[RMDB]
RNA sequence: GGGAACGACUCGAGUAGAGUCGAAAAUCUUGUGGUCGGGCGGUCGGCACGCUGUGCAGCGGCAGCGCAAUGUCACCUACGCUGGUAGUGCUGCGCCGGCUAGGCGCAACAUCGCGCAGCUGCCGCAUGAUUUAGGUCAGUUCGCUGACCUAAAUCAAAAAGAAACAACAACAACAAC
Reactivity to DMS in 0.01 (KOAc 150mM, MgCl2 10mM, bicine 150mM(pH8.5), 24C), signal-to-noise 2, nucleotides 027 to 126: u000c050u000u010g030u000g000g010u000c070g030g010g010c080g020g010u010c040g010g020c050a070c130g010c070u000g010u010g010c030a090g010c030g000g020c020a060g000c000g000c030a040a020u000g000u000c110a040c050c020u000a030c180g020c040u000g010g040u000a080g010u000g030c070u010g010c000g020c010c010g000g010c130u010a060g000g000c020g000c060a070a030c010a010u000c090g010c040g000c020a080g000c030u020g010c000c030g020c020a040
Reactivity to 2A3 in 0.01 (KOAc 150mM, MgCl2 10mM, bicine 150mM(pH8.5), 24C), signal-to-noise 1, nucleotides 027 to 126: u010c010u050u180g030u080g090g060u100c040g050g010g000c000g010g030u080c020g000g000c040a000c070g050c070u100g010u030g080c050a040g020c000g000g000c010a030g010c010g000c040a010a060u060g040u040c000a050c040c010u050a030c130g040c060u040g020g050u060a060g010u060g030c040u030g020c020g000c000c000g020g010c000u010a040g010g000c040g000c010a010a040c000a010u050c020g050c030g000c070a040g010c000u000g000c000c000g000c000a040
Source information
The record gives the reactivity of an RNA of 177 nucleotides to DMS and 2A3. High 2A3 reactivity points to a flexible backbone, as in loops and unpaired stretches. The 2A3 profile rests on 1,741 reads. 2A3 adducts were read by reverse transcription with SuperScript II with manganese. Reactivities are given for positions 27 through 126. Source: RMDB library OK2TST, as collected in RNAgym. The reactions ran in a buffer of 150 mM KOAc, 10 mM MgCl2 and 150 mM bicine (pH 8.5), at 24 C.